Notes: Structure probing data (2A3) for a 207-nucleotide construct. For 2A3, 605 sequencing reads were counted. Reactivities are given for positions 27 through 156. The data come from the RNA Mapping Database (RMDB), library OK3TST.
RNA sequence: GGGAACGACUCGAGUAGAGUCGAAAAGGAUCGCUCCCAUGGGGGUGUAGUUGCAGGGUGUGAUAAGGGCCAUGCAAGAAUGCCAGGAGAAUGUUUAAGAGCAACCUUAUCUAGACUGGGGAUCUCAGAAACCUUCCCUGAGAAAGCUACUCAGCUGCUGUCAAAUCAGUUUCGACUGAUUUGACAGAAAAGAAACAACAACAACAAC
Reactivity to 2A3 in 0.01 (KOAc 150mM, MgCl2 10mM, bicine 150mM(pH8.5), 24C), signal-to-noise 1, nucleotides 027 to 156: g040g020a110u060c040g010c050u050c010c070c010a100u120g020g010g000g010g040u030g060u100a110g020u050u000g000c030a000g020g000g010u020g000u000g000a020u010a060a030g020g040g000c000c010a010u020g000c010a000a020g050a190a060u140g020c070c030a050g020g040a060g060a100a070u190g060u090u180u220a170a060g010a030g000c000a030a080c000c000u050u020a030u070c010u070a050g160a190c030u030g000g000g000g000a020u000c000u000c010a020g050a010a120a030c010c080u020u000c010c000c000u000g000a030g010a090a090a000g040c010u080a050c030u040c100a020g000c030u110g050